[RMDB]
RNA sequence: GGGAACGACUCGAGUAGAGUCGAAAAUUGAUCAACGGAACAAGUUACCCUAGGGAUAACAGCGCAAUCCUGUUCUAGAGUUCCUAUCGACAAUAGGGUUUACGACCUCGAUGUUGGAUCAGGACACCCAAAUGGUGCAACCGCUAUUAAAGGUUCGCGCGAAAUCUAUGUUCGCAUAGAUUUCGCGAAAAGAAACAACAACAACAAC
Reactivity to 2A3 in 0.01 (KOAc 150mM, MgCl2 10mM, bicine 150mM(pH8.5), 24C), signal-to-noise 1, nucleotides 027 to 156: u070u060g040a010u040c010a010a080c020g020g050a070a020c060a080a150g070u120u110a060c000c000c040u050a040g000g000g000a040u040a070a040c010a020g010c020g000c200a020a070u100c000c000u000g010u050u060c080u090a110g000a020g080u060u070c000c000u000a080u040c020g200a040c030a100a030u140a190g000g020g000u000u040u100a010c160g020a040c020c020u110c030g040a070u030g010u070u060g080g000a020u000c010a000g060g000a060c040a140c010c000c000a040a040a030u280g000g000u010g010c040a030a000c000c040g100c070u170a100u220u170a250a120a000g030g000u000u090c040g000

The data come from the RNA Mapping Database (RMDB), library PDB130. Chemical mapping of a 207-nucleotide RNA with 2A3. The RNA was probed in 150 mM KOAc, 10 mM MgCl2 and 150 mM bicine (pH 8.5) at 24 C. Values cover nucleotides 27 to 156. 2A3 adducts were read by reverse transcription with SuperScript II with manganese.